[RMDB]
RNA sequence: GGGAACGACUCGAGUAGAGUCGAAAACCGGAAUGGUUCCGCCGUGAUCGGGCCAUGCAAUAGUUGCCAACGACAACUAUGCUCCGGUGGCUCAGGCAGCGUAACGCUGCUUGAAAGACCACAUGAAUUAGCGCGACAUUGUUCGCAAUGUCGCGAACCGGACUCUAUUGUUCGCAAUAGAGUCCGGAAAAGAAACAACAACAACAAC
Reactivity to 2A3 in 0.01 (KOAc 150mM, MgCl2 10mM, bicine 150mM(pH8.5), 24C), signal-to-noise 1, nucleotides 027 to 156: c010c000g000g010a020a060u100g030g000u130u280c020c030g000c050c050g160u100g020a130u120c060g000g000g040c010c000a010u010g000c010a130a260u000a020g030u010u000g000c000c110a160a060c150g180a100c000a000a000c030u010a000u000g000c040u030c050c120g060g000u000g000g000c010u000c000a020g000g010c000a000g000c000g040u110a150a060c250g000c000u000g020c000u000u000g000a000a000a000g020a050c060c000a000c000a060u200g300a260a060u160u050a110g130c000g000c000g020a000c000a010u000u020g000u050u080c070g000c040a000a000u020g000u000c000g000c000g010a000a000

This 207-nucleotide RNA was probed chemically with 2A3.
It was measured as part of the RMDB library M2RFPK.
Reactivities are given for positions 27 through 156.
For 2A3, 558 sequencing reads were counted.
The RNA was probed in 150 mM KOAc, 10 mM MgCl2 and 150 mM bicine (pH 8.5) at 24 C.